[RMDB]
RNA sequence: GGGAACGACUCGAGUAGAGUCGAAAACCAGGUCGGACCGCGAGGAGGUGGAGAUGCCAUGCCGACCCGAAGAGGAAAGAAGGACGCGAGACGCAAACCUGUGAGUGGAUCCUCGCCUUUAUUCACUGAGCUCUGAGGUUCGCCUCAGAGAAAAGAAACAACAACAACAAC
Reactivity to DMS in 0.01 (KOAc 150mM, MgCl2 10mM, bicine 150mM(pH8.5), 24C), signal-to-noise 8, nucleotides 027 to 129: c000c020a140g000g000u010c000g000g040a100c020c050g010c070g000a050g000g000a040g000g000u050g030g020a090g030a100u010g000c040c040a060u030g000c010c010g000a050c060c020c030g010a060a040g020a040g020g010a000a020a020g000a080a030g020g010a080c130g000c100g010a040g020a060c090g030c090a060a110a080c030c040u030g000u030g000a050g030u040g010g010a100u000c030c030u020c060g030c050c030u020u030u020a060u000u000c060a080c100u010g000a120g010
Reactivity to 2A3 in 0.01 (KOAc 150mM, MgCl2 10mM, bicine 150mM(pH8.5), 24C), signal-to-noise 9, nucleotides 027 to 129: c010c000a000g020g050u040c020g010g020a070c020c020g020c030g030a050g020g010a020g010g020u050g030g020a120g010a050u170g050c030c010a040u090g010c000c000g010a030c000c000c010g030a050a020g050a020g030g030a050a030a030g030a010a010g020g010a010c030g020c040g040a060g020a020c050g010c100a050a090a100c010c010u050g020u050g060a030g020u040g010g020a040u020c010c010u010c020g040c000c000u150u180u070a160u090u080c050a050c110u080g040a030g040
Chemical mapping of a 170-nucleotide RNA with DMS and 2A3. Conditions: 150 mM KOAc, 10 mM MgCl2 and 150 mM bicine (pH 8.5), 24 C. Reactivities are given for positions 27 through 129. For DMS, 56,954 sequencing reads were counted. It was measured as part of the RMDB library 15KLIB. For 2A3 the reverse transcriptase was SuperScript II with manganese.